RNA sequence: GGGAACGACUCGAGUAGAGUCGAAAAUCCGUGUGGUUCCUGUGGGGCACCCCCCUGCGCAAAUGACUAAAAGAAAAAUCAGCAGGUGAAGAGACUUACCUGUCGUCGUCGACGAAGGCUGGUAAGCCCGAUAUAUAUGCUUCGGCAUAUAUAUCGGAAAAGAAACAACAACAACAAC
Reactivity to DMS in 0.01 (KOAc 150mM, MgCl2 10mM, bicine 150mM(pH8.5), 24C), signal-to-noise 3, nucleotides 027 to 126: u000c010c010g000u000g010u010g010g020u010u000c010c010u000g020u010g010g000g010g020c090a120c040c030c020c010c010c010u000g020c030g010c140a060a050a120u010g010a080c070u020a050a080a130a160g020a020a050a080a090a070u000c080a110g020c040a010g000g040u010g020a080a080g010a140g010a130c010u000u000a000c000c000u000g000u000c010g010u000c010g030u010c200g010a120c040g000a050a030g000g000c000u000g020g020u000a010a020g000c080
Reactivity to 2A3 in 0.01 (KOAc 150mM, MgCl2 10mM, bicine 150mM(pH8.5), 24C), signal-to-noise 1, nucleotides 027 to 126: u010c000c000g060u060g010u070g020g040u040u020c010c020u030g030u120g050g010g050g000c030a090c010c020c000c020c000c000u010g020c040g040c010a070a080a140u080g020a070c030u120a060a060a060a150g130a040a070a030a000a000u070c040a010g010c000a000g000g060u060g040a100a010g060a000g030a060c000u000u010a020c000c000u020g010u000c010g030u020c000g030u050c070g020a060c040g010a030a000g020g000c030u030g010g000u010a000a000g030c030